This 177-nucleotide RNA was probed chemically with 2A3 and DMS. For 2A3 the reverse transcriptase was SuperScript II with manganese. For DMS the reverse transcriptase was MarathonRT. The DMS profile rests on 7,879 reads.
[RMDB]
RNA sequence: GGGAACGACUCGAGUAGAGUCGAAAAGAUAUGGACGACCUGUGACAUGCGUACAGGUCGGAAACGACCUGGACGCAACAGCACAGGGUCGUCCUAAGUCAAAAUCCUCGCCCUUCGGGGCGAGGAAGUUAUUAUGUCGGUUCGCCGACAUAAUAACAAAAGAAACAACAACAACAAC
Reactivity to 2A3 in 0.01 (KOAc 150mM, MgCl2 10mM, bicine 150mM(pH8.5), 24C), signal-to-noise 3, nucleotides 027 to 126: g010a000u050a020u080g000g000a010c010g000a000c000c000u000g000u010g030a120c120a270u300g000c000g010u010a010c010a000g010g020u010c010g000g000a030a000a000c010g000a000c000c030u000g010g010a000c010g000c010a030a020c060a030g020c000a000c000a030g080g010g000u020c000g000u000c000c000u010a010a000g010u000c000a010a020a020a250u040c010c000u000c010g010c000c000c020u040u090c300g050g010g000g000c000g000a000g000g000a000a000
Reactivity to DMS in 0.01 (KOAc 150mM, MgCl2 10mM, bicine 150mM(pH8.5), 24C), signal-to-noise 4, nucleotides 027 to 126: g000a040u000a230u010g000g000a020c000g010a040c000c000u000g010u000g000a040c100a220u010g010c010g020u000a030c010a010g000g000u010c010g000g000a030a030a090c000g000a010c000c000u000g000g000a020c000g020c020a040a020c220a160g000c000a000c000a020g000g000g010u000c010g010u000c000c000u000a000a070g000u000c020a110a100a130a150u000c000c000u000c000g010c000c000c010u000u010c210g030g010g010g010c000g000a000g000g000a000a010